Record summary
This 207-nucleotide RNA was probed chemically with DMS and 2A3. The data come from the RNA Mapping Database (RMDB), library M2RFOK. For DMS, 1,519 sequencing reads were counted. For DMS the reverse transcriptase was MarathonRT. The RNA was probed in 150 mM KOAc, 10 mM MgCl2 and 150 mM bicine (pH 8.5) at 24 C.

RNA sequence: GGGAACGACUCGAGUAGAGUCGAAAACCUGACUACAUUUUACUGUUCCUAAAGAAUUUGUGACAGGUACAGUAAAACGUAUUGCAAGGUUUAUCAGUUCCUAUAAACAGGUAAAUAACAAUAUAUGAAAAGCAAAGACUGUUCGCAGUCUUUGCAAGUACCAAGUGUUGUUCGCAACACUUGGUACAAAAGAAACAACAACAACAAC
Reactivity to DMS in 0.01 (KOAc 150mM, MgCl2 10mM, bicine 150mM(pH8.5), 24C), signal-to-noise 1, nucleotides 027 to 156: c020c010u010g000a220c050u000a020c030a010u000u000u000u000a000c040u000g000u000u000c010c000u020a120a190a250g050a150a110u010u000u010g050u000g060a180c180a030g010g010u000a010c000a060g030u010a010a030a020a010c030g030u020a020u000u030g040c060a090a020g030g000u010u020u000a020u000c040a170g020u020u020c020c010u020a140u010a120a060a150c080a010g000g030u000a070a060a170u000a080a210c030a090a120u000a160u020a100u010g000a060a130a180a170g000c000a020a000a020g010a010c010u010g080u000u010c300g020c010a050g050u000c000u000u000u000g000c000a000a060
Reactivity to 2A3 in 0.01 (KOAc 150mM, MgCl2 10mM, bicine 150mM(pH8.5), 24C), signal-to-noise 4, nucleotides 027 to 156: c000c000u000g040a030c010u010a010c000a040u000u000u000u000a000c000u000g010u040u050c000c000u080a130a140a060g130a270a290u200u240u250g210u140g050a050c080a070g000g000u010a000c000a000g000u010a000a000a000a000c010g000u000a020u020u130g080c050a080a040g010g020u020u010u040a150u060c020a010g010u000u000c000c000u040a060u170a080a070a020c050a010g090g050u100a060a080a090u240a120a050c030a070a090u130a020u050a030u230g080a080a110a020a010g000c010a000a000a000g000a000c000u000g010u050u020c160g000c100a000g000u000c000u000u000u000g000c000a010a000